Chemical mapping of a 177-nucleotide RNA with 2A3 and DMS. Reactivities are given for positions 27 through 126. For DMS, 3,931 sequencing reads were counted. The reactions ran in a buffer of 150 mM KOAc, 10 mM MgCl2 and 150 mM bicine (pH 8.5), at 24 C. 2A3 adducts were read by reverse transcription with SuperScript II with manganese.
RNA sequence: GGGAACGACUCGAGUAGAGUCGAAAAGGAUGAACUGUACCUGACUGAGCCAGCCAUAGCUUGGUUUGAGGCUAACCGGCCCACUCUACCUGCUUUGACUAUAACUGAGGAUACGGCCCGCACAGCGCAGGGAAGAGAAGUUCGCUUCUCUUCCCUGAAAAGAAACAACAACAACAAC
Reactivity to 2A3 in 0.01 (KOAc 150mM, MgCl2 10mM, bicine 150mM(pH8.5), 24C), signal-to-noise 2, nucleotides 027 to 126: g050g000a090u100g030a110a000c060u070g020u130a100c020c030u050g080a060c030u040g020a000g030c010c010a020g070c010c020a120u140a060g020c030u060u060g010g070u060u050u130g120a050g000g000c030u040a060a030c030c000g010g030c000c040c000a040c010u070c030u040a070c020c020u040g050c080u070u050u110g070a080c040u050a020u030a300a050c050u040g030a000g050g010a040u050a120c000g030g000c010c000c000g030c000a050c020a030g070c070g010
Reactivity to DMS in 0.01 (KOAc 150mM, MgCl2 10mM, bicine 150mM(pH8.5), 24C), signal-to-noise 4, nucleotides 027 to 126: g000g000a110u010g010a060a130c080u000g000u010a060c070c030u000g000a090c040u000g000a070g000c010c030a090g030c130c100a060u000a130g000c070u000u000g000g020u000u010u000g000a090g000g000c040u000a050a150c190c060g010g010c030c020c050a060c090u000c040u010a120c060c020u000g000c070u000u010u000g000a070c040u000a030u010a100a060c070u000g010a080g010g020a060u010a070c080g000g020c020c030c020g000c090a040c100a060g020c130g020